[RMDB]
RNA sequence: GGGAACGACUCGAGUAGAGUCGAAAAAGAUAUGGAGUCGAGGGAGCACCACCACCUAUCUCGGAUCGGAAACGAUCCGAGCCGAGGGUGUGCAGUGCAUCGAUCUCGACUCCUAAGUCGCAGCGUAGCGGUGAGAUACGUUCGCGUAUCUCACCGCAAAAGAAACAACAACAACAAC
Reactivity to DMS in 0.01 (KOAc 150mM, MgCl2 10mM, bicine 150mM(pH8.5), 24C), signal-to-noise 2, nucleotides 027 to 126: a090g030a020u020a300u010g010g040a000g030u000c000g000a000g010g000g010a000g020c000a000c000c060a210c270c010a040c000c000u000a150u010c000u000c000g000g000a040u000c000g010g010a100a040a140c050g000a020u000c000c000g020a020g000c300c130g000a150g000g010g030u000g010u000g030c080a100g010u000g000c010a300u000c190g000a040u010c020u000c000g030a010c000u000c000c000u000a070a100g010u000c020g000c210a080g000c200g000u000a080
Reactivity to 2A3 in 0.01 (KOAc 150mM, MgCl2 10mM, bicine 150mM(pH8.5), 24C), signal-to-noise 1, nucleotides 027 to 126: a080g040a050u050a060u100g000g010a020g010u040c010g030a020g000g000g010a020g000c000a000c020c010a010c000c000a050c000c000u090a090u140c000u010c000g000g040a000u000c000g060g000a020a020a110c030g000a000u000c000c000g010a000g000c000c050g280a190g020g030g020u030g030u020g040c150a030g030u030g030c020a190u290c060g000a020u000c000u010c010g000a010c000u030c000c000u000a020a010g000u040c000g060c040a080g180c160g180u250a030

Annotation
Chemical mapping of a 177-nucleotide RNA with DMS and 2A3. 2A3 adducts were read by reverse transcription with SuperScript II with manganese. Source: RMDB library TTRDES, as collected in RNAgym.